Structure probing data (2A3 and DMS) for a 177-nucleotide construct. For DMS the reverse transcriptase was MarathonRT. It was measured as part of the RMDB library RFMREP. For 2A3 the reverse transcriptase was SuperScript II with manganese. Reactivities are rounded to 0.1 and cut off at 0 and 3. For DMS, 9,122 sequencing reads were counted.

[RMDB]
RNA sequence: GGGAACGACUCGAGUAGAGUCGAAAAAAGCCUAAUGGCCAUAGUAGGAGGGGUAAUCUAUCUGGGGAAGUUGGUGGUUCUUCUUCCUCCUUGCCCUCAGGUGCACAGACUGGGGAGUGGAUAGAUACAUAUAACUUGUGUUCGCACAAGUUAUAUGAAAAGAAACAACAACAACAAC
Reactivity to 2A3 in 0.01 (KOAc 150mM, MgCl2 10mM, bicine 150mM(pH8.5), 24C), signal-to-noise 3, nucleotides 027 to 126: a000a000g080c050c010u100a130a070u140g020g000c020c010a060u040a050g100u030a030g030g060a040g020g000g010g000u030a030a030u030c030u030a010u000c030u040g010g000g010g000a010a020g010u020u020g000g020u020g010g010u060u010c000u010u000c000u010u000c000c000u000c000c010u050u070g030c000c000c000u000c000a000g030g010u130g030c090a040c030a130g140a060c040u020g000g000g020g000a060g010u040g030g010a010u020a040g020a000u020a030
Reactivity to DMS in 0.01 (KOAc 150mM, MgCl2 10mM, bicine 150mM(pH8.5), 24C), signal-to-noise 5, nucleotides 027 to 126: a080a100g000c010c010u000a100a110u010g010g010c010c040a060u010a090g010u000a080g010g010a080g000g000g000g010u000a070a040u010c030u000a040u010c040u000g020g010g000g010a020a020g010u000u000g000g000u000g020g000u010u010c030u000u010c010u000u000c000c010u000c010c090u000u000g010c070c010c000u000c010a020g010g010u010g020c110a080c170a070g000a070c030u000g010g010g010g000a090g020u000g000g000a040u000a020g000a070u010a230